[RMDB]
RNA sequence: GGGAACGACUCGAGUAGAGUCGAAAACCCUUCCCAUGAGUCCACACGGUAAGCGCCUCUGGCCCGAGGCCGCUCGUCGGGAAUCGGACACUGGAACUAGUACUCUGGUCAAUGCGGAUUGCCUGUGCAGCGCAUUGGUAUUCGUACCAAUGCGCUGAAAAGAAACAACAACAACAAC
Reactivity to DMS in 0.01 (KOAc 150mM, MgCl2 10mM, bicine 150mM(pH8.5), 24C), signal-to-noise 3, nucleotides 027 to 126: c000c010c000u000u000c010c000c030a110u030g000a090g010u000c020c020a170c090a120c080g000g000u010a120a050g030c020g000c000c010u000c040u000g010g000c060c080c070g010a020g000g000c050c050g030c030u010c080g030u010c070g040g000g030a070a050u010c060g020g000a020c050a070c050u000g020g020a090a050c070u020a060g000u010a050c100u000c030u010g020g030u000c060a070a090u020g000c000g050g030a130u000u000g000c020c020u010g030u030g000
Reactivity to 2A3 in 0.01 (KOAc 150mM, MgCl2 10mM, bicine 150mM(pH8.5), 24C), signal-to-noise 5, nucleotides 027 to 126: c000c000c000u010u020c070c000c000a080u120g040a010g030u020c030c030a030c020a020c120g020g010u070a060a030g020c010g020c050c010u010c030u060g090g000c020c010c020g010a000g010g020c020c000g020c000u010c000g070u060c030g000g010g040a040a080u110c040g030g000a020c020a020c070u030g040g050a050a030c030u020a050g030u080a040c010u020c020u040g000g040u050c000a060a110u100g010c010g080g000a100u040u040g030c020c010u050g030u040g040

Chemical mapping of a 177-nucleotide RNA with DMS and 2A3.
It was measured as part of the RMDB libraries RFM100 and RFMREP.
Values cover nucleotides 27 to 126.
The RNA was probed in 150 mM KOAc, 10 mM MgCl2 and 150 mM bicine (pH 8.5) at 24 C.